[RMDB]
RNA sequence: GGGAACGACUCGAGUAGAGUCGAAAAGAUAUGGAUCCGCAGCCGAUAAGCUGCCAUCGGAAACGAUGGUCAGCUUUUGACGGUGGUGGAUCCUAAGUCAAAACCGAUCAGCUUCGGCUGAUCGGAAGCUUAAUAGUCUGUUCGCAGACUAUUAAGCAAAAGAAACAACAACAACAAC
Reactivity to DMS in 0.01 (KOAc 150mM, MgCl2 10mM, bicine 150mM(pH8.5), 24C), signal-to-noise 4, nucleotides 027 to 126: g000a030u000a160u000g000g000a010u000c000c000g020c000a100g000c000c000g010a120u000a010a020g020c000u000g010c000c000a000u000c000g010g000a080a030a080c000g010a010u000g000g000u010c030a000g010c000u000u000u000u000g010a180c030g010g010u010g000g050u000g000g000a010u000c000c000u000a000a060g010u000c020a100a060a120a170c000c000g000a010u000c000a000g010c010u000u020c250g030g010c000u000g000a010u000c000g010g000a010a040
Reactivity to 2A3 in 0.01 (KOAc 150mM, MgCl2 10mM, bicine 150mM(pH8.5), 24C), signal-to-noise 4, nucleotides 027 to 126: g010a000u040a020u080g000g000a000u000c000c000g000c020a000g010c000c010g140a220u110a300a000g000c010u000g000c000c000a000u010c000g010g000a040a010a010c010g000a010u000g000g040u070c070a000g020c000u010u000u000u060g090a020c000g000g020u040g010g020u020g000g000a000u000c000c000u000a020a000g020u010c020a010a010a100a200c010c000g000a010u000c000a000g010c000u070u230c300g210g000c000u010g010a000u000c000g000g000a000a010
About this RNA:
The data come from the RNA Mapping Database (RMDB), library TTRDEL. This 177-nucleotide RNA was probed chemically with DMS and 2A3. For DMS, 8,390 sequencing reads were counted.